[RMDB]
RNA sequence: GGGAACGACUCGAGUAGAGUCGAAAAACAAGCACGAACAACUGAGCUGGGGUGAAAGAGUGCACGAUAUGCGGCCAGAAAGAGAUGGGUGCUUAGAUCGCGGCUUGAAACCGGCAAAAGUUCAAGCAUCAUAUCGGGUCUUCGGACCCGAUAUGAUAAAAGAAACAACAACAACAAC
Reactivity to 2A3 in 0.01 (KOAc 150mM, MgCl2 10mM, bicine 150mM(pH8.5), 24C), signal-to-noise 3, nucleotides 027 to 126: a000c080a000a030g000c000a020c100g030a120a040c050a020a050c030u090g000a010g040c000u140g040g070g000g150u070g050a090a150a030g100a040g010u180g090c060a010c000g050a030u010a010u140g050c010g070g030c000c010a070g140a180a140a040g150a050g020a040u070g070g040g160u010g000c000u010u050a030g000a060u000c020g000c040g050g030c000u040u000g010a000a000a050c000c000g040g000c040a030a070a070a000g000u000u000c010a000a000g100c060

An RNA of 177 nucleotides, treated with 2A3 and read out base by base. It was measured as part of the RMDB library OK1LIB. For 2A3 the reverse transcriptase was SuperScript II with manganese. The RNA was probed in 150 mM KOAc, 10 mM MgCl2 and 150 mM bicine (pH 8.5) at 24 C.